[RMDB]
RNA sequence: GGGAACGACUCGAGUAGAGUCGAAAACUGACGCCUUGCGUGUUACGGUUGUUUCGCAAAAGUUGACCGAACUUGAUUAUUUAGAGGAAGUAAAAGUCGUACCAAGGUUUCCGUAGGUGAACCUACGACCUUUGAAAUGGUUCGCCAUUUCAAAGGUAAAAGAAACAACAACAACAAC
Reactivity to 2A3 in 0.01 (KOAc 150mM, MgCl2 10mM, bicine 150mM(pH8.5), 24C), signal-to-noise 5, nucleotides 027 to 126: c000u030g050a020c030g040c000c020u030u080g050c050g020u090g030u060u070a080c050g040g000u010u010g030u010u100u000c050g010c050a020a050a040a030g050u060u100g070a080c040c050g000a050a050c020u040u050g050a070u090u160a100u080u130u140a180g070a080g020g100a070a040g030u080a020a080a030a000g010u010c010g010u000a030c020c000a040a010g070g000u000u050u000c010c020g000u010a000g030g030u150g180a120a110c000c010u000a000c000g020
Reactivity to DMS in 0.01 (KOAc 150mM, MgCl2 10mM, bicine 150mM(pH8.5), 24C), signal-to-noise 5, nucleotides 027 to 126: c040u000g020a080c110g010c030c020u010u000g020c070g050u020g020u000u020a070c190g000g040u000u000g000u000u000u000c070g050c170a070a080a070a060g000u020u010g000a080c060c010g000a120a080c020u000u000g000a150u010u010a080u010u010u020a120g000a100g010g000a070a050g000u010a020a070a100a060g000u010c010g000u020a070c010c010a100a100g010g000u000u000u000c010c000g020u010a040g010g010u030g030a130a150c010c000u000a010c020g010